[RMDB]
RNA sequence: GGGAACGACUCGAGUAGAGUCGAAAAGUCGUUUCGACGACACAAAACCGUAGGAAUCGAUAAGUGUAGUGUCCCAACAGCCAGCUUCGAAAGAGGCUGGACAUGGGAGGAUACACUUUUGACGAUUCCUAAACGGCUCAACCACUUUCGAGUGGAAAUUCCAGAUGACUUUCGAGUCAUCUGGAAUAAAAGAAACAACAACAACAAC
Reactivity to DMS in 0.01 (KOAc 150mM, MgCl2 10mM, bicine 150mM(pH8.5), 24C), signal-to-noise 2, nucleotides 027 to 156: g000u000c000g020u010u000u010c070g000a080c050g000a100c080a140c210a090a050a080a030c010c000g050u000a120g000g000a030a010u000c010g030a180u010a020a030g050u000g040u000a010g010u000g010u000c000c000c000a060a090c090a210g020c020c000a010g020c000u000u050c000g000a190a190a240g020a060g000g000c000u000g020g000a000c050a140u000g010g000g030a030g000g030a080u000a000c020a000c010u000u010u010u000g030a150c080g030a040u000u000c000c000u000a000a010a110c000g000g000c050u000c080a100a120c000c000a030c000u000u000u000c150g020a050g000u000g000g000a100a150
Reactivity to 2A3 in 0.01 (KOAc 150mM, MgCl2 10mM, bicine 150mM(pH8.5), 24C), signal-to-noise 2, nucleotides 027 to 156: g010u000c010g000u030u070u180c210g130a040c020g010a010c030a010c020a080a200a030a020c000c010g020u020a010g000g030a000a000u010c010g010a060u020a050a000g000u020g020u020a060g030u040g290u190c010c000c010a050a080c030a020g040c000c000a000g010c000u000u000c010g040a090a050a030g010a010g010g010c000u000g000g010a000c010a060u020g000g010g000a000g000g010a030u010a000c000a000c000u060u060u010u080g150a050c020g000a000u000u000c000c000u000a000a010a000c000g010g040c020u050c090a070a130c030c000a010c010u080u170u110c170g080a010g000u010g020g000a080a110
Background:
Conditions: 150 mM KOAc, 10 mM MgCl2 and 150 mM bicine (pH 8.5), 24 C. The record gives the reactivity of an RNA of 207 nucleotides to DMS and 2A3. DMS adducts were read by reverse transcription with MarathonRT. For 2A3, 3,488 sequencing reads were counted. It was measured as part of the RMDB library RNAMAK. For DMS, 3,265 sequencing reads were counted.